[RMDB]
RNA sequence: GGGAACGACUCGAGUAGAGUCGAAAAGCAGUAGUGUUCGCACUACUGCAAAUAAAAAGAGGUGCUAGCUACAGCCUCUAUAAGCAAAGAUCGAAAGAUCAAAAACAUGCUACUUCGGUAGCAUGAACUAGGAUUAUAUGUUCGCAUAUAAUCCUAGAAAAGAAACAACAACAACAAC
Reactivity to DMS in 0.01 (KOAc 150mM, MgCl2 10mM, bicine 150mM(pH8.5), 24C), signal-to-noise 7, nucleotides 027 to 126: g010c000a000g020u000a010g030u000g020u010u010c220g030c010a010c000u000a000c000u000g010c000a010a030a050u010a060a070a080a090a040g010a020g010g020u000g010c050u000a140g010c130u010a100c050a160g010c000c000u010c010u000a050u010a070a140g020c190a100a090a100g010a010u000c000g000a120a090a140g000a020u010c000a040a070a070a100a180c010a000u000g000c000u000a000c000u000u010c170g030g000u000a000g000c000a000u000g000a030a120
Reactivity to 2A3 in 0.01 (KOAc 150mM, MgCl2 10mM, bicine 150mM(pH8.5), 24C), signal-to-noise 7, nucleotides 027 to 126: g000c000a000g000u010a000g000u010g050u070u110c220g040c080a000c000u000a000c000u000g000c000a000a010a000u020a000a040a010a010a000g010a010g010g010u060g030c090u100a090g050c050u090a090c060a080g050c010c000u000c010u030a130u040a080a020g080c070a170a060a030g010a010u000c000g030a060a020a030g000a010u010c030a060a000a010a010a020c000a000u000g010c000u000a000c000u030u050c220g090g000u000a000g000c000a000u000g000a010a020
Structure probing data (DMS and 2A3) for a 177-nucleotide construct.
It was measured as part of the RMDB library M2PK50.
For 2A3, 23,553 sequencing reads were counted.
The reactions ran in a buffer of 150 mM KOAc, 10 mM MgCl2 and 150 mM bicine (pH 8.5), at 24 C.
DMS adducts were read by reverse transcription with MarathonRT.
For DMS, 10,261 sequencing reads were counted.
As a SHAPE reagent, 2A3 marks flexible, mostly unpaired nucleotides at the ribose 2'-OH.